[RMDB]
RNA sequence: GGGAACGACUCGAGUAGAGUCGAAAAAAGGUUUAUUAAUUUCUUCUAUUAGAAGUAAUGACCCAGUCGUAUACUUAGAGCAUAUGAAAUUGUAUCGUUCAUUCCGUGAAGAAGUACCUGAAGAAGAUGUGUUUAAGUGUUUCGACACUUAAACACAAAAAGAAACAACAACAACAAC
Reactivity to DMS in 0.01 (KOAc 150mM, MgCl2 10mM, bicine 150mM(pH8.5), 24C), signal-to-noise 1, nucleotides 027 to 126: a110a090g000g010u040u000u000a050u010u010a050a050u020u010u040c010u000u000c090u010a200u040u020a090g000a040a030g000u000a020a030u000g010a060c060c040c060a070g040u010c040g000u000a060u010a010c020u010u010a060g020a150g010c050a010u000a030u000g000a030a090a070u000u000g010u010a120u000c090g000u000u010c010a040u010u010c060c140g000u010g000a120a020g040a030a020g040u010a040c050c040u010g020a110a100g010a130a110g030a110